The record gives the reactivity of an RNA of 177 nucleotides to 2A3 and DMS. High 2A3 reactivity points to a flexible backbone, as in loops and unpaired stretches. Source: RMDB library OK1LIB, as collected in RNAgym. The RNA was probed in 150 mM KOAc, 10 mM MgCl2 and 150 mM bicine (pH 8.5) at 24 C. The 2A3 profile rests on 7,246 reads.
RNA sequence: GGGAACGACUCGAGUAGAGUCGAAAACUAUUUAUAGACAGAACAGUGGAAAACGUAUAUCGCUAUAAACCUUACACCCCGAUUCUUCCAGUCGUACGAUUCCACAUAGGCGAGGCAUAAGCGAAAGACCCUAUUAUUAUUUCGAUAAUAAUAGGGUAAAAGAAACAACAACAACAAC
Reactivity to 2A3 in 0.01 (KOAc 150mM, MgCl2 10mM, bicine 150mM(pH8.5), 24C), signal-to-noise 6, nucleotides 027 to 126: c000u010a060u050u100u050a140u050a040g060a040c060a040g070a190a020c000a050g030u060g090g050a100a100a040a020c000g020u020a070u030a020u150c020g010c060u010a020u090a130a080a070c010c010u040u050a030c020a060c040c010c000c010g070a090u080u030c010u090u020c030c020a030g020u030c010g000u040a030c020g030a040u040u030c000c010a030c020a040u060a030g090g030c060g020a020g040g000c040a060u060a080a090g020c050g060a100a010a020g070
Reactivity to DMS in 0.01 (KOAc 150mM, MgCl2 10mM, bicine 150mM(pH8.5), 24C), signal-to-noise 5, nucleotides 027 to 126: c030u010a070u020u020u000a050u010a080g010a100c100a160g010a060a040c090a130g000u010g000g000a050a050a070a070c060g000u010a050u020a090u010c040g020c030u010a040u000a040a050a070c090c040u000u030a060c120a100c020c000c020c020g010a080u010u010c040u000u000c040c060a070g030u000c050g010u020a030c060g000a140u000u000c020c020a010c060a090u010a050g010g020c030g000a060g000g010c050a030u020a030a080g000c060g010a070a100a070g000